[RMDB]
RNA sequence: GGGAACGACUCGAGUAGAGUCGAAAAACAGUACCAGCUGCUACGGCGGCUGGUACUGAACUUUCAUGGAGUUAAGAAACCACGUAAACAAAGCGGAACCGAAAAGCUAAACGAGUAGGAAGAAUAAAUAGGUACCACCACUUCGGUGGUGGUACAACGACCAAAUAUGGUUCGCCAUAUUUGGUCGAAAAGAAACAACAACAACAAC
Reactivity to 2A3 in 0.01 (KOAc 150mM, MgCl2 10mM, bicine 150mM(pH8.5), 24C), signal-to-noise 2, nucleotides 027 to 156: a000c000a000g010u000a010c000c020a020g000c010u030g000c000u020a030c190g140g000c000g000g000c000u000g010g000u000a000c000u000g000a000a000c010u030u110u080c020a050u080g060g000a030g050u120u100a120a050g080a070a090a020c000c000a020c050g070u150a000a100a080c060a130a150a020g020c020g030g000a070a100c000c000g030a010a000a000a000g040c040u160a270a120a000c010g010a020g020u010a010g070g010a050a030g020a040a060u250a100a060a050u200a080g170g000u000a000c000c000a000c010c010a000c000u050u020c180g080g000u000g000g000u010g010g000u000a000c000a000a000
An RNA of 207 nucleotides, treated with 2A3 and read out base by base.
The data come from the RNA Mapping Database (RMDB), library M2RFPK.
For 2A3 the reverse transcriptase was SuperScript II with manganese.